The record gives the reactivity of an RNA of 177 nucleotides to 2A3 and DMS. The 2A3 profile rests on 1,235 reads. Values cover nucleotides 27 to 126. The data come from the RNA Mapping Database (RMDB), libraries RFM100 and RFMREP. For 2A3 the reverse transcriptase was SuperScript II with manganese.
RNA sequence: GGGAACGACUCGAGUAGAGUCGAAAAAACGCGGGAAAACUUACCCGGGCAGGCGAUUGUUGUGAGAAGGAAUACCUGAUGAUAUCGCGCGUGGUGCAUGGCCGUUCUUAACACGUGGAGUGAUCUGUAGCUCAAUUAGAUUCGUCUAAUUGAGCUAAAAAGAAACAACAACAACAAC
Reactivity to 2A3 in 0.01 (KOAc 150mM, MgCl2 10mM, bicine 150mM(pH8.5), 24C), signal-to-noise 2, nucleotides 027 to 126: a040a000c060g010c010g000g000g040a060a000a000a100c050u050u070a080c020c000c000g000g050g020c030a030g050g010c000g050a080u010u030g000u060u060g010u010g050a130g060a150a070g040g010a090a030u130a140c000c020u040g050a020u060g020a010u030a010u240c000g010c010g000c020g070u030g010g000u060g020c030a040u140g050g000c030c010g050u060u020c010u090u120a130a010c010a000c130g040u080g030g050a040g040u010g050a070u020c020u030g060
Reactivity to DMS in 0.01 (KOAc 150mM, MgCl2 10mM, bicine 150mM(pH8.5), 24C), signal-to-noise 8, nucleotides 027 to 126: a050a050c100g020c050g000g000g000a080a040a070a080c130u010u010a090c050c010c030g010g000g020c060a050g010g020c060g010a080u010u010g010u000u000g010u000g000a080g010a090a040g000g010a150a080u020a100c030c010u000g000a090u020g000a070u020a050u010c050g010c040g010c050g010u000g000g010u010g000c060a050u010g010g010c020c010g000u000u010c030u010u020a060a090c150a050c090g010u000g010g010a150g000u010g000a060u010c040u000g010